[RMDB]
RNA sequence: GGGAACGACUCGAGUAGAGUCGAAAAAUGCAUCGCUGGGCUCCAUGAUCGAGGGUGGCAAGGCCUACUGAAGCGCGCACGGUAGGCUGAUGACCCACCUCUCGGUUUGUGGAGCCUGUGCUGAAGCGCGCACGGCAACCGAAAGGUGCGACUCGAAGAUAUAUUCCCUGUUCGCAGGGAAUAUAUCAAAAGAAACAACAACAACAAC
Reactivity to DMS in 0.01 (KOAc 150mM, MgCl2 10mM, bicine 150mM(pH8.5), 24C), signal-to-noise 2, nucleotides 027 to 156: a060u010g040c050a100u000c020g010c010u000g000g020g050c000u000c010c030a060u000g030a020u000c020g050a020g020g000g010u000g010g010c020a060a070g040g030c010c000u000a020c010u000g000a080a030g030c070g000c030g000c030a300c020g030g020u010a010g020g030c000u010g010a060u000g000a050c300c030c000a010c000c010u030c020u000c000g060g030u000u000u000g060u010g000g000a130g020c010c000u000g020u000g010c000u000g000a050a070g010c000g020c010g040c040a300c050g000g010c000a080a110c000c010g020a100a110a150g000g010u000g010c010g010a110c000u010c040g010a210a160
Reactivity to 2A3 in 0.01 (KOAc 150mM, MgCl2 10mM, bicine 150mM(pH8.5), 24C), signal-to-noise 2, nucleotides 027 to 156: a000u200g010c010a040u000c010g010c010u040g000g000g000c000u000c000c000a010u010g030a030u030c010g000a000g030g010g010u000g010g010c020a050a040g010g000c010c000u000a000c000u040g080a190a040g000c000g000c000g000c000a020c020g010g000u000a000g000g000c000u010g000a040u010g000a000c000c000c010a000c000c030u230c010u000c010g070g010u040u010u080g000u000g010g000a000g000c010c000u000g010u000g000c000u000g010a100a040g000c000g000c000g000c000a010c000g020g040c010a000a040c030c010g070a120a040a040g020g000u030g020c000g030a030c030u040c170g110a170a050